RNA sequence: GGGAACGACUCGAGUAGAGUCGAAAAUCGAAAACGAUCCGGCGGCGGCCUGGGAGGGCCUUCACGCGGGUCCUCAAGGGGAGAACCACCGAUGGAGAAUACGCUCCUCAUCGGACUGUCGCGGCAGGCCCGUAGGCAGAUUCGUCUGCCUACGGGCAAAAGAAACAACAACAACAAC
Reactivity to DMS in 0.01 (KOAc 150mM, MgCl2 10mM, bicine 150mM(pH8.5), 24C), signal-to-noise 1, nucleotides 027 to 126: u090c010g000a290a140a190a170c150g030a010u000c000c000g050g040c000g070g030c000g000g000c080c000u010g040g000g000a080g000g000g000c000c000u000u040c040a000c300g000c300g000g060g000u000c000c000u080c110a180a140g040g000g060g000a000g000a300a150c060c030a000c150c130g000a080u000g000g000a100g000a080a140u150a010c300g000c180u000c040c040u030c000a050u000c030g000g000a090c000u000g000u000c000g000c080g000g000c300a000g000
Reactivity to 2A3 in 0.01 (KOAc 150mM, MgCl2 10mM, bicine 150mM(pH8.5), 24C), signal-to-noise 2, nucleotides 027 to 126: u060c020g050a010a010a000a060c010g010a050u050c020c010g010g000c000g000g000c000g000g050c000c000u120g030g210g000a010g010g000g010c000c000u050u090c100a070c040g140c070g000g000g020u010c010c000u000c000a010a010g020g000g030g000a150g010a060a050c000c030a020c000c000g040a050u020g030g080a030g000a010a040u240a220c190g020c110u020c000c010u000c050a040u000c000g000g020a040c000u010g030u030c000g000c000g010g020c000a010g070